This 177-nucleotide RNA was probed chemically with 2A3 and DMS.
RNA sequence: GGGAACGACUCGAGUAGAGUCGAAAAGAUAUGGAUCCCUAGUACUUCGAUAAGCUUGGGUCGGAAACGACCCAAAGCUUUUGACGAAGGACCGGGAUCCUAAGUCAAAACACCGCUUCGGCGGUGACUCUAUAAAACACUUCGGUGUUUUAUAGAGAAAAGAAACAACAACAACAAC
Reactivity to 2A3 in 0.01 (KOAc 150mM, MgCl2 10mM, bicine 150mM(pH8.5), 24C), signal-to-noise 2, nucleotides 027 to 126: g010a010u050a040u190g000g000a000u010c000c000c000u000a020g000u000a000c010u000u010c010g080a080u020a130a010g000c010u010u020g000g000g000u010c020g020g020a090a120a040c000g030a010c030c030c020a010a000a000g000c010u000u020u010u050g050a020c000g000a000a010g010g000a000c010c010g010g000g010a000u000c000c010u000a020a010g010u000c010a000a000a100a140c010a010c030c000g000c050u070u080c300g220g000c000g000g000u010g000a010
Reactivity to DMS in 0.01 (KOAc 150mM, MgCl2 10mM, bicine 150mM(pH8.5), 24C), signal-to-noise 6, nucleotides 027 to 126: g010a060u000a300u010g000g000a000u000c010c000c000u010a080g010u000a100c010u000u000c000g010a230u000a020a010g010c000u000u000g000g010g010u000c000g000g000a090a100a280c010g020a020c000c000c010a010a000a040g020c000u000u000u000u000g010a230c140g010a040a000g000g000a090c300c300g010g000g000a020u000c000c010u010a000a110g010u020c040a120a090a120a200c000a020c000c000g020c000u000u010c260g020g020c000g020g020u000g000a030

The DMS profile rests on 5,838 reads.